[RMDB]
RNA sequence: GGGAACGACUCGAGUAGAGUCGAAAAGAUAUGGAUAGUACGAGAGACGGUCGGAAACGACCGAAUCUCGAUGAGUAUAUCCUAAGUCAAACCCCAAGGGAGUAUCUUCGGAUACUCCCUUGGGGAACCAUAUACAAACCUUCGGGUUUGUAUAUGGAAAAGAAACAACAACAACAAC
Reactivity to DMS in 0.01 (KOAc 150mM, MgCl2 10mM, bicine 150mM(pH8.5), 24C), signal-to-noise 2, nucleotides 027 to 126: g000a080u020a300u000g000g000a020u000a000g010u000a100c010g000a040g010a010g020a300c000g000g010u000c000g000g000a080a080a210c000g000a000c000c000g020a050a080u000c000u000c000g010a030u010g010a210g020u010a140u000a000u000c000c000u000a080a120g010u000c030a100a100a140c010c010c000c000a020a000g000g000g000a010g010u000a020u000c000u010u030c250g030g000a020u000a000c000u000c000c000c000u000u000g010g000g000g010a000a020
Reactivity to 2A3 in 0.01 (KOAc 150mM, MgCl2 10mM, bicine 150mM(pH8.5), 24C), signal-to-noise 1, nucleotides 027 to 126: g030a010u140a050u200g010g010a000u050a030g210u300a080c030g020a000g010a000g010a040c010g000g030u000c020g000g040a090a070a010c000g000a000c000c030g000a000a010u000c030u010c010g050a030u070g030a010g120u140a030u000a000u140c000c000u010a130a010g040u000c060a050a010a190c000c020c000c010a010a010g020g000g040a000g100u130a010u020c040u100u160c300g220g010a000u020a000c020u030c000c010c000u000u000g000g000g000g000a000a010